[RMDB]
RNA sequence: GGGAACGACUCGAGUAGAGUCGAAAAGGCUAUGAAUGCAUAUCCUCUUGUAGUCACUCCUCUUGUUUCAGCAGGCAUAUUUGGUGUAAAACCAGCUGUGUCUUUUGAUUAUCUUAUUAGGGAGGCUUACAUCUGAUAUCUUCGGAUAUCAGAUGUAAAAAGAAACAACAACAACAAC
Reactivity to DMS in 0.01 (KOAc 150mM, MgCl2 10mM, bicine 150mM(pH8.5), 24C), signal-to-noise 3, nucleotides 027 to 126: g010g000c020u000a220u010g000a080a120u010g030c060a100u000a070u010c040c010u000c080u000u000g010u000a050g010u000c050a200c060u000c000c000u010c110u000u000g020u010u000u000c020a020g010c070a010g000g000c010a010u000a020u000u010u010g010g000u000g010u030a090a100a160a050c000c000a010g020c070u010g030u000g010u000c000u000u000u010u000g000a060u000u010a040u010c100u020u010a070u000u010a160g000g010g000a020g000g010c200u010
Reactivity to 2A3 in 0.01 (KOAc 150mM, MgCl2 10mM, bicine 150mM(pH8.5), 24C), signal-to-noise 4, nucleotides 027 to 126: g020g020c020u020a020u150g110a140a040u150g050c030a050u050a090u200c010c010u040c040u040u060g060u040a020g040u040c030a020c070u020c000c010u030c020u040u080g000u040u050u010c020a000g000c000a000g010g000c000a010u020a020u010u020u010g030g000u030g020u080a100a180a040a020c000c000a000g000c010u010g000u000g020u020c000u030u020u020u010g030a040u040u120a080u090c060u090u130a150u090u110a070g000g020g000a000g010g030c010u010

This 177-nucleotide RNA was probed chemically with DMS and 2A3. The RNA was probed in 150 mM KOAc, 10 mM MgCl2 and 150 mM bicine (pH 8.5) at 24 C. DMS adducts were read by reverse transcription with MarathonRT. In probing experiments dimethyl sulfate is read out at A N1 and C N3, which are open when not base-paired.